An RNA of 207 nucleotides, treated with DMS and 2A3 and read out base by base. Conditions: 150 mM KOAc, 10 mM MgCl2 and 150 mM bicine (pH 8.5), 24 C. Values are in units of 0.01, from 0 to 300, in steps of 10. Reactivities are given for positions 27 through 156. For DMS the reverse transcriptase was MarathonRT. The 2A3 profile rests on 3,055 reads.

[RMDB]
RNA sequence: GGGAACGACUCGAGUAGAGUCGAAAAGACAAGCAGGCGCCGCACAGUAGACGUGAGACAGCAACGCUGAAUGCGACUUCUGCGUUGGGUCAAGCUCAUGUUAUAGACCCCGAAUUGUCAACGCGUGAUAUGCUAACGCUAAUUUAUGGUCAAAUGACUCUUAGCAUUUCUUCGGAAAUGCUAAGAGAAAAGAAACAACAACAACAAC
Reactivity to DMS in 0.01 (KOAc 150mM, MgCl2 10mM, bicine 150mM(pH8.5), 24C), signal-to-noise 2, nucleotides 027 to 156: g020a080c070a120a110g020c030a070g030g040c090g020c010c010g060c050a080c050a150g030u000a160g010a040c030g020u000g030a140g010a210c090a200g000c030a060a030c070g040c000u020g000a070a130u020g000c100g010a130c090u010u000c000u020g000c020g000u010u000g020g010g020u000c060a080a160g010c030u000c030a050u000g010u000u010a110u010a170g010a060c010c000c010c030g020a030a090u000u000g020u010c020a070a070c040g010c040g010u010g000a170u010a060u020g010c040u010a070a070c040g030c010u010a030a040u010u000u010a060u010g000g020u000c010a080a090a120u000g000a280
Reactivity to 2A3 in 0.01 (KOAc 150mM, MgCl2 10mM, bicine 150mM(pH8.5), 24C), signal-to-noise 5, nucleotides 027 to 156: g030a020c020a020a010g020c040a010g020g000c030g010c060c010g040c010a050c020a060g090u110a030g000a020c020g010u010g010a040g030a020c030a050g020c000a020a060c030g000c010u030g010a070a030u140g070c060g090a060c060u020u000c010u030g020c010g010u030u100g020g010g030u080c070a040a020g000c000u020c030a030u040g020u040u090a180u100a110g040a040c000c000c020c010g070a110a080u080u040g050u060c090a060a070c050g010c000g010u060g060a060u060a040u300g080c090u080a080a000c010g000c030u020a060a050u070u090u110a100u120g080g000u070c040a090a070a050u140g060a070